[RMDB]
Conditions: 150 mM KOAc, 10 mM MgCl2 and 150 mM bicine (pH 8.5), 24 C. Structure probing data (DMS and 2A3) for a 207-nucleotide construct. Reactivities are given for positions 27 through 156. It was measured as part of the RMDB library M2RFPK. 2A3 adducts were read by reverse transcription with SuperScript II with manganese.

RNA sequence: GGGAACGACUCGAGUAGAGUCGAAAAGUCUCCCAGAGAGCUUGGCCGUCGGGCCUUACACCCCGACUUGCUGAGUUUCUCUAGGAGAGUCCCUUUCCCAGCCAGAGGUGGCUGGUCAAACAAUACCAAAACUCUUGCUAGUUCGCUAGCAAGAGAAUCAACCAUAUACGUUCGCGUAUAUGGUUGAAAAAGAAACAACAACAACAAC
Reactivity to DMS in 0.01 (KOAc 150mM, MgCl2 10mM, bicine 150mM(pH8.5), 24C), signal-to-noise 1, nucleotides 027 to 156: g010u000c020u000c010c000c020a000g030a030g020a080g040c000u010u000g000g000c050c300g010u000c020g010g030g040c050c080u000u000a060c080a190c300c020c020c000g000a090c040u010u010g020c000u050g000a060g010u000u000u020c010u010c010u000a030g000g000a030g000a010g050u000c000c000c000u000u000u000c110c000c000a050g000c010c020a030g000a300g010g000u000g030g010c000u010g010g010u000c100a030a040a070c090a050a040u000a060c010c000a080a150a070a180c030u000c000u000u000g000c000u000a010g000u000u000c300g040c000u000a010g010c000a000a010g020a000g010a030a080
Reactivity to 2A3 in 0.01 (KOAc 150mM, MgCl2 10mM, bicine 150mM(pH8.5), 24C), signal-to-noise 2, nucleotides 027 to 156: g030u000c000u000c000c000c000a010g000a000g000a000g000c010u010u010g020g010c020c020g020u000c000g010g000g010c020c000u030u090a040c050a060c010c000c000c000g000a010c010u020u130g000c010u030g000a000g000u040u300u010c000u020c000u000a000g010g000a010g000a010g040u000c000c000c000u030u060u040c010c050c000a000g000c000c000a000g010a010g000g000u000g000g000c000u080g040g070u220c010a000a000a010c040a060a020u010a000c000c000a050a000a060a130c000u010c000u010u000g000c000u000a000g010u050u050c240g020c120u000a000g000c000a000a000g000a000g000a000a040